[RMDB]
RNA sequence: GGGAACGACUCGAGUAGAGUCGAAAAGUACUAUGCCCGCCAUUAUUGAUGCAUGCUCCACCUCCCAGUCCUUAAUAGUUGCUUUGAAGUUUCCUUUCGGUGGGUUCUGCAGCGUCUUUAUCAGAAACAUACGGGGUACUUUCGAGUACCCCGUAUGAAAAGAAACAACAACAACAAC
Reactivity to DMS in 0.01 (KOAc 150mM, MgCl2 10mM, bicine 150mM(pH8.5), 24C), signal-to-noise 1, nucleotides 027 to 126: g040u000a100c050u000a050u000g030c030c030c020g030c150c070a100u020u020a050u000u000g000a080u010g000c080a040u000g010c000u010c020c010a080c040c010u000c040c000c010a100g000u000c060c020u000u000a050a070u000a080g010u000u010g010c050u000u010u000g010a050a090g010u000u010u010c000c020u000u000u000c100g010g070u000g000g020g010u000u000c070u020g010c080a060g000c030g010u010c030u000u000u030a060u020c090a120g000a130a060a140
Structure probing data (DMS) for a 177-nucleotide construct. It was measured as part of the RMDB library M2PK90. Reactivities are given for positions 27 through 126.